[RMDB]
RNA sequence: GGGAACGACUCGAGUAGAGUCGAAAAGAUAUGGACGCAAAUGACGCCUACGAGGUCGGAAACGACUACCCACCGUAGGAACUACGUCUAUGCGUCCUAAGUCAAAACCGUCACUUCGGUGACGGAACAAUAGGGCUACCUUCGGGUAGCCCUAUUGAAAAGAAACAACAACAACAAC
Reactivity to 2A3 in 0.01 (KOAc 150mM, MgCl2 10mM, bicine 150mM(pH8.5), 24C), signal-to-noise 2, nucleotides 027 to 126: g050a020u060a050u280g000g000a000c000g000c000a020a040a100u300g030a000c010g030c060c010u000a000c000g010a020g000g000u020c020g010g010a050a120a030c030g000a000c030u100a120c000c090c030a020c010c000g010u000a000g050g070a010a020c100u300a040c040g010u000c010u000a010u030g000c000g010u000c000c000u070a010a000g030u010c020a000a000a070a180c010c000g000u020c000a000c000u060u080c300g200g000u000g010a010c000g000g000a000a000
Reactivity to DMS in 0.01 (KOAc 150mM, MgCl2 10mM, bicine 150mM(pH8.5), 24C), signal-to-noise 2, nucleotides 027 to 126: g030a050u000a260u020g000g010a010c010g020c000a010a070a130u080g000a030c020g000c020c000u010a000c010g020a080g010g050u000c010g020g010a120a140a210c030g030a050c000u000a060c070c030c020a300c060c010g000u000a000g030g000a070a010c150u040a300c060g000u000c000u000a300u000g000c000g000u000c010c010u020a050a080g010u030c010a120a080a030a100c000c000g000u000c000a000c000u000u010c170g070g000u010g000a000c010g000g000a010a080
Conditions: 150 mM KOAc, 10 mM MgCl2 and 150 mM bicine (pH 8.5), 24 C. Chemical mapping of a 177-nucleotide RNA with 2A3 and DMS. For DMS the reverse transcriptase was MarathonRT. For DMS, 1,158 sequencing reads were counted. Reactivities are given for positions 27 through 126.